Background
The record gives the reactivity of an RNA of 177 nucleotides to 2A3. For 2A3 the reverse transcriptase was SuperScript II with manganese.
RNA sequence: GGGAACGACUCGAGUAGAGUCGAAAAUUUCAGUACUGAUUAAUGUAAUUAUAUAAUCAGAUUUCACUUAGAAACUGCUUUUUUGAUGAAUAUCGCAUAUCAUUAACUUAUAUAAUUACUAAGUAGAGAUACUAGGUCCGUUCGCGGACCUAGUAUCAAAAGAAACAACAACAACAAC
Reactivity to 2A3 in 0.01 (KOAc 150mM, MgCl2 10mM, bicine 150mM(pH8.5), 24C), signal-to-noise 1, nucleotides 027 to 126: u060u030u060c050a000g060u020a140c000u060g000a050u210u210a110a240u250g000u000a000a000u000u050a000u000a000u130a000a020u230c000a000g090a110u000u000u020c050a060c130u190u150a020g000a000a000a000c000u000g080c130u180u010u000u040u000u150g000a000u020g000a080a180u140a250u270c110g000c090a000u080a020u080c020a020u050u170a000a000c000u030u020a060u000a000u020a000a000u030u000a060c000u030a020a050g000u060a050g020a000

The data come from the RNA Mapping Database (RMDB), library OK1LIB. The RNA was probed in 150 mM KOAc, 10 mM MgCl2 and 150 mM bicine (pH 8.5) at 24 C.